RNA sequence: GGGAACGACUCGAGUAGAGUCGAAAAUUGAAGGAAAAUCUGAUAAAAAAAGGGUGCAACAGGUUAUUGCAGAACCAGUCAAUAUUAUUUGUACUCAUGGAACAAUGAGUAUAGAUAAGCUUGAUGAGUACGACAUAGUAUUCGUACUAUGUCGUACAAAAGAAACAACAACAACAAC
Reactivity to DMS in 0.01 (KOAc 150mM, MgCl2 10mM, bicine 150mM(pH8.5), 24C), signal-to-noise 3, nucleotides 027 to 126: u030u030g000a100a090g010g000a070a070a090a030u010c040u010g010a080u050a010a000a040a040a070a060a090g020g000g020u010g020c010a040a050c110a080g000g010u020u010a060u010u030g010c040a030g000a130a060c050c040a130g000u000c020a000a030u030a030u000u000a010u000u010u010g000u000a000c010u000c010a010u000g020g060a140a100c250a080a010u010g000a010g040u000a000u010a020g000a020u000a000a000g000c060u000u000g000a010u000g000a150
Reactivity to 2A3 in 0.01 (KOAc 150mM, MgCl2 10mM, bicine 150mM(pH8.5), 24C), signal-to-noise 7, nucleotides 027 to 126: u080u050g080a030a040g040g080a060a050a000a070u050c040u060g110a100u270a070a080a010a000a000a010a040g100g020g000u050g010c020a050a030c030a080g050g030u060u080a050u070u110g030c030a010g030a070a040c030c010a000g020u010c000a020a010u020a020u100u000a000u000u000u000g000u000a000c000u000c000a000u040g090g150a160a110c080a150a120u000g000a000g000u000a000u000a000g000a000u000a000a000g010c020u020u020g020a020u040g040a030
The record gives the reactivity of an RNA of 177 nucleotides to DMS and 2A3. For 2A3 the reverse transcriptase was SuperScript II with manganese. The 2A3 profile rests on 6,743 reads.